[RMDB]
About this RNA: Structure probing data (DMS and 2A3) for a 177-nucleotide construct. Conditions: 150 mM KOAc, 10 mM MgCl2 and 150 mM bicine (pH 8.5), 24 C. The DMS profile rests on 926 reads. 2A3 adducts were read by reverse transcription with SuperScript II with manganese. For DMS the reverse transcriptase was MarathonRT.

RNA sequence: GGGAACGACUCGAGUAGAGUCGAAAACUCACAGACUGUGUCUGACAGACAGUCUCAGUCAGUGUGAGUCUCAGACACACUCAGUGAGAGUCACAGAGACUGACACAGUGACAGAGUGACAGACAGAUCACUGCGGUCAAUUCGUUGACCGCAGUGAAAAAGAAACAACAACAACAAC
Reactivity to DMS in 0.01 (KOAc 150mM, MgCl2 10mM, bicine 150mM(pH8.5), 24C), signal-to-noise 1, nucleotides 027 to 126: c040u000c020a110c110a110g000a100c040u000g000u000g010u000c000u000g000a170c120a060g000a040c090a060g000u010c040u010c080a120g010u000c060a100g030u010g000u010g020a030g000u010c000u000c030a110g010a100c030a030c150a080c020u040c080a100g000u010g010a100g000a040g020u000c040a140c110a080g010a140g000a060c010u010g000a050c000a020c010a080g000u000g010a030c000a160g020a010g000u000g010a170c010a070g010a130c050a050g000a150
Reactivity to 2A3 in 0.01 (KOAc 150mM, MgCl2 10mM, bicine 150mM(pH8.5), 24C), signal-to-noise 1, nucleotides 027 to 126: c010u020c020a060c060a020g130a050c000u030g030u000g060u150c030u050g020a110c000a000g160a010c060a050g060u000c000u000c000a060g070u010c020a010g020u010g020u010g220a010g020u000c000u000c000a050g060a020c010a000c040a010c090u100c010a130g100u050g100a060g000a010g050u000c000a020c050a030g080a000g020a040c010u100g050a000c020a000c010a030g130u000g080a020c000a080g070a010g030u100g040a050c000a030g070a030c020a020g020a050